The data come from the RNA Mapping Database (RMDB), library M2PK50. This 177-nucleotide RNA was probed chemically with 2A3 and DMS. For DMS the reverse transcriptase was MarathonRT. For 2A3, 25,544 sequencing reads were counted. For 2A3 the reverse transcriptase was SuperScript II with manganese. The RNA was probed in 150 mM KOAc, 10 mM MgCl2 and 150 mM bicine (pH 8.5) at 24 C.
RNA sequence: GGGAACGACUCGAGUAGAGUCGAAAAUACGACGUAUUCGUACGUCGUAAAGGUACGAAAGUACAAAGGAGCAAAAGCAUGAGCUCCUAUAAAUCAUGCAAAACACGAGCCGAUUCGUCGGCUCGAAACACCGUAUACUAUUCGUAGUAUACGGUGUAAAAGAAACAACAACAACAAC
Reactivity to 2A3 in 0.01 (KOAc 150mM, MgCl2 10mM, bicine 150mM(pH8.5), 24C), signal-to-noise 7, nucleotides 027 to 126: u040a000c000g000a000c000g000u010a020u020u090c190g030u040a010c000g000u000c000g000u000a030a020a000g100g000u000a000c010g040a140a020a030g000u000a010c030a040a180a050g010g010a010g000c020a040a130a210a030g000c000a030u010g000a010g000c000u000c000c010u020a020u110a000a000a010u020c000a000u010g010c000a030a030a040a020c170a020c020g000a000g000c000c000g010a010u030u040c090g060u010c010g080g000c000u010c000g000a000a000
Reactivity to DMS in 0.01 (KOAc 150mM, MgCl2 10mM, bicine 150mM(pH8.5), 24C), signal-to-noise 6, nucleotides 027 to 126: u000a020c010g000a010c000g020u000a010u000u020c210g030u000a010c000g000u000c000g010u000a000a050a110g010g020u000a000c000g010a130a060a170g000u000a000c010a150a140a170g010g000a000g010c000a110a090a100a140g010c000a010u000g010a020g000c000u000c000c010u000a020u010a020a010a060u000c000a010u000g020c010a120a060a090a080c230a150c030g000a010g020c000c000g000a040u000u010c170g010u000c000g010g000c010u000c000g000a020a080